[RMDB]
RNA sequence: GGGAACGACUCGAGUAGAGUCGAAAAGCCUGGGGUCCGUGUGAGUUUUCAAGUCUAUGGACCCUGGGCAUAUGCUGUAUGGAUGUGGGCUUUGCUUCCAACUGUUUCCGAUGCUCUGUGUCAGAAUGGGUAGGCGCCUGCCUGGGUUGAGGCUCAGCGUAGAUUAAAGAUUCGUCUUUAAUCUACGAAAAGAAACAACAACAACAAC
Reactivity to DMS in 0.01 (KOAc 150mM, MgCl2 10mM, bicine 150mM(pH8.5), 24C), signal-to-noise 1, nucleotides 027 to 156: g020c000c000u000g020g020g000g010u000c010c020g050u040g000u010g000a110g000u010u000u060u020c200a120a270g030u000c030u000a020u000g000g010a030c000c000c000u000g000g010g050c000a010u010a010u010g030c000u000g030u010a100u000g020g000a070u010g010u010g000g000g020c040u020u000u000g020c030u000u010c050c050a060a100c060u010g010u010u000u010c010c020g030a100u010g010c010u010c050u020g000u000g030u010c050a050g030a070a100u010g010g010g000u000a080g020g050c120g030c040c040u000g000c000c010u000g010g010g030u000u000g010a120g010g010c020u000c020a120g000
Reactivity to 2A3 in 0.01 (KOAc 150mM, MgCl2 10mM, bicine 150mM(pH8.5), 24C), signal-to-noise 3, nucleotides 027 to 156: g010c010c010u010g000g000g030g010u000c060c050g000u060g050u070g050a110g020u100u150u190u300c180a150a080g050u000c010u040a000u030g010g000a000c000c010c000u000g000g010g000c000a010u030a000u000g030c000u020g040u150a090u100g030g010a050u060g030u060g040g030g020c000u080u100u080g020c030u070u020c040c010a050a040c050u050g040u020u050u000c040c060g030a040u070g000c000u000c030u110g040u020g040u090c040a060g040a180a110u100g030g010g000u050a070g040g050c040g020c020c020u060g030c020c010u030g000g060g000u020u070g030a020g030g000c010u010c060a020g010

Chemical mapping of a 207-nucleotide RNA with DMS and 2A3. The DMS profile rests on 4,880 reads. The reactions ran in a buffer of 150 mM KOAc, 10 mM MgCl2 and 150 mM bicine (pH 8.5), at 24 C. It was measured as part of the RMDB library OK3TST.